[RMDB]
Description: Structure probing data (DMS and 2A3) for a 177-nucleotide construct. DMS adducts were read by reverse transcription with MarathonRT. Values cover nucleotides 27 to 126. The RNA was probed in 150 mM KOAc, 10 mM MgCl2 and 150 mM bicine (pH 8.5) at 24 C. 2A3 adducts were read by reverse transcription with SuperScript II with manganese.
RNA sequence: GGGAACGACUCGAGUAGAGUCGAAAACGAGCCUCGUUCGCGAGGCUCGAAAGGCGGCGAAAGCUCGACUAAAUGUCGAAAGUGUAACCCCAAUCCCACACAAAAGGCUGCCGUUCGCGGCAGCCAACUAUAUGGAUUUCUUCGGAAAUCCAUAUAGAAAAGAAACAACAACAACAAC
Reactivity to DMS in 0.01 (KOAc 150mM, MgCl2 10mM, bicine 150mM(pH8.5), 24C), signal-to-noise 1, nucleotides 027 to 126: c010g010a010g020c010c000u020c010g020u020u020c160g030c010g000a020g020g020c000u000c000g000a010a020a090g000g020c280g000g020c010g000a070a170a210g010c020u000c000g020a020c040u020a070a110a040u020g020u000c000g000a000a080a010g030u010g000u000a150a070c010c000c020c000a130a150u000c000c000c000a100c150a100c170a060a080a070a080g020g010c000u000g030c020c030g000u000u000c230g000c000g010g020c000a000g040c000c000a000a040
Reactivity to 2A3 in 0.01 (KOAc 150mM, MgCl2 10mM, bicine 150mM(pH8.5), 24C), signal-to-noise 1, nucleotides 027 to 126: c010g000a000g010c000c000u020c000g040u060u060c090g000c010g120a010g000g020c000u000c000g000a010a000a010g010g040c130g010g000c040g030a090a000a000g010c010u020c000g000a010c010u160a300a100a190u270g010u000c000g070a080a070a020g100u110g030u090a010a020c000c000c020c000a000a080u020c000c030c000a010c010a000c010a030a110a010a020g010g000c000u000g020c060c000g000u070u070c300g000c000g060g000c000a000g000c000c000a000a000